Annotation
The record gives the reactivity of an RNA of 177 nucleotides to DMS. For DMS the reverse transcriptase was MarathonRT. It was measured as part of the RMDB library TTRDES. Reactivities are given for positions 27 through 126. The DMS profile rests on 2,024 reads.
[RMDB]
RNA sequence: GGGAACGACUCGAGUAGAGUCGAAAAGAUAUGGACCAUCCCAUAGACAUGUCGGGUCGGUCGGAAACGACCGUCCCCGACAACAGCUAUGGGAGUGGUCCUAAGUCAAAUCGUCCUUCGGGACGAACCCAGGUUAAAAGUUCGCUUUUAACCUGGGAAAAGAAACAACAACAACAAC
Reactivity to DMS in 0.01 (KOAc 150mM, MgCl2 10mM, bicine 150mM(pH8.5), 24C), signal-to-noise 2, nucleotides 027 to 126: g020a100u000a300u020g010g010a010c000c020a120u000c000c000c010a010u000a010g000a050c130a180u000g010u000c000g000g000g010u000c000g000g050u010c010g000g000a060a080a290c000g010a020c020c000g030u000c300c020c000c010g000a000c000a030a110c190a210g000c000u000a000u000g000g000g000a020g030u000g030g000u000c000c000u010a000a100g050u000c050a060a080a140u000c020g010u000c000c000u000u040c200g020g010g020a020c000g000a020a040